Structure probing data (2A3 and DMS) for a 177-nucleotide construct. Values cover nucleotides 27 to 126.
RNA sequence: GGGAACGACUCGAGUAGAGUCGAAAAAUCCACUUUUCGAGGAUUUCUUCCCUUCCUCCCCUCCGGCCCUUCCUCGACUCGGGUUGGCUCAUCCUCGGCGAGGGCGACGGUCCUCAGUUCUCUCUAUGAUAAUACUGUAGUUCGCUACAGUAUUAUCAAAAGAAACAACAACAACAAC
Reactivity to 2A3 in 0.01 (KOAc 150mM, MgCl2 10mM, bicine 150mM(pH8.5), 24C), signal-to-noise 3, nucleotides 027 to 126: a000u040c020c010a040c040u220u200u100u160c090g070a110g010g010a010u010u020u040c030u000u030c020c000c030u000u040c000c010u010c000c000c000c000u010c000c030g040g000c020c000c000u030u030c010c000u020c010g030a060c020u020c020g040g010g000u020u030g040g020c020u020c030a100u040c010c010u040c030g040g020c050g010a030g000g000g000c010g020a050c060g050g030u020c010c010u030c010a050g000u080u000c030u000c000u000c010u030a070u120
Reactivity to DMS in 0.01 (KOAc 150mM, MgCl2 10mM, bicine 150mM(pH8.5), 24C), signal-to-noise 5, nucleotides 027 to 126: a010u010c010c010a110c090u010u000u010u010c140g020a160g010g010a020u000u000u000c150u000u000c010c000c000u000u010c020c000u000c010c000c010c010u000c030c020g030g000c020c020c030u010u010c030c010u000c040g010a060c040u010c040g010g000g000u000u000g020g000c060u000c070a100u000c030c020u010c060g000g010c110g000a040g010g010g010c030g010a100c210g020g000u000c020c020u010c030a140g000u000u000c020u000c020u010c080u000a190u010

As a SHAPE reagent, 2A3 marks flexible, mostly unpaired nucleotides at the ribose 2'-OH.